Structure probing data (2A3) for a 177-nucleotide construct. 2A3 adducts were read by reverse transcription with SuperScript II with manganese.

RNA sequence: GGGAACGACUCGAGUAGAGUCGAAAAGACAGGAUCAUUGAGAAAAAAAGAGAGUUAGAAGCACAAGAAGUUAUUUCUCGCGAGCUCAUCAAACAUCAAUACGGCGAUUUGUUUUCGCUGCGAGAGCGGUCAGGGUACCGUUCGCGGUACCCUGACCAAAAGAAACAACAACAACAAC
Reactivity to 2A3 in 0.01 (KOAc 150mM, MgCl2 10mM, bicine 150mM(pH8.5), 24C), signal-to-noise 1, nucleotides 027 to 126: g000a110c270a080g060g040a100u000c020a150u110u230g000a000g140a000a300a000a000a000a000a000g300a000g000a000g000u140u210a000g110a050a050g010c060a000c110a130a000g080a060a000g000u150u250a270u180u000u000c160u000c000g000c070g000a000g080c000u000c000a230u000c000a000a000a210c000a000u180c130a000a000u060a000c000g000g000c060g100a080u100u000u000g150u040u070u040u100c000g000c000u060g050c040g000a080g010a000g000c000